RNA sequence: GGGAACGACUCGAGUAGAGUCGAAAAUCCCGAGUGAGGCUUAUCCCGGGGAAUCCGGCCAAGUCCCGAAAUGUCUAGUCCCGUGGUCUCACUUCCAAAAGGAGGAGCGGGGGGACUUGGAACACGAGUAGCCGAAUCUUCGGAUUCGGCAAAAGAAACAACAACAACAAC
Reactivity to 2A3 in 0.01 (KOAc 150mM, MgCl2 10mM, bicine 150mM(pH8.5), 24C), signal-to-noise 3, nucleotides 027 to 129: u030c000c010c000g000a000g050u090g010a000g010g010c000u080u100a070u190c000c010c000g010g000g020g140a130a100u040c050c020g000g010c000c000a000a000g000u000c020c010c010g050a040a080a120u300g060u070c040u080a000g160u090c000c000c000g060u020g110g000u000c000u020c010a110c000u090u000c030c000a000a220a030a070g030g050a010g010g000a050g010c000g000g000g020g000g000g000a000c000u020u000g000g000a020a000c050a050c050g040a050g020u140a030
Reactivity to DMS in 0.01 (KOAc 150mM, MgCl2 10mM, bicine 150mM(pH8.5), 24C), signal-to-noise 4, nucleotides 027 to 129: u070c050c010c030g010a140g050u040g030a140g020g030c050u000u070a110u070c080c010c000g040g010g020g110a050a120u030c070c070g060g050c030c050a000a060g000u010c000c000c000g040a110a100a100u070g050u080c160u030a000g020u100c050c000c000g050u040g040g050u040c000u040c010a160c020u000u000c090c150a070a060a100a100g040g030a020g000g000a140g080c050g010g060g080g000g000g000a040c020u080u000g000g000a000a000c140a080c030g020a000g040u050a110